[RMDB]
RNA sequence: GGGAACGACUCGAGUAGAGUCGAAAAGAUAUGGAUCAGGUCUGAUGACCUCACGUAACAUCGGUCGGAAACGACCGUGGUGAGCAAGGACGCAGUCCUAAGUCAAAGUGUCGGUUCGCCGACACAACAGUGGAUCCUUGUUCGCAAGGAUCCACUGAAAAGAAACAACAACAACAAC
Reactivity to DMS in 0.01 (KOAc 150mM, MgCl2 10mM, bicine 150mM(pH8.5), 24C), signal-to-noise 2, nucleotides 027 to 126: g000a040u000a300u000g050g000a000u000c020a300g020g000u000c000u000g000a180u000g000a070c300c000u020c030a000c000g000u010a040a080c210a030u000c010g010g000u000c000g020g000a050a100a200c020g020a000c000c010g050u000g000g010u000g020a010g000c070a060a160g000g000a040c020g000c060a220g000u000c020c020u000a050a180g000u000c020a090a060a140g000u000g000u000c000g050g000u000u010c220g010c010c000g000a020c000a000c000a020a040
Reactivity to 2A3 in 0.01 (KOAc 150mM, MgCl2 10mM, bicine 150mM(pH8.5), 24C), signal-to-noise 2, nucleotides 027 to 126: g050a030u100a040u140g020g000a030u080c080a060g020g100u000c000u020g220a300u140g030a170c030c000u010c000a000c030g140u210a190a040c080a300u300c030g000g000u000c000g000g040a110a040a000c000g020a000c000c030g000u000g000g000u000g000a000g000c080a100a190g000g000a000c020g000c060a000g010u020c020c010u030a100a030g050u030c040a080a110a150g000u010g000u000c030g050g000u030u060c300g090c090c000g000a000c010a000c000a010a010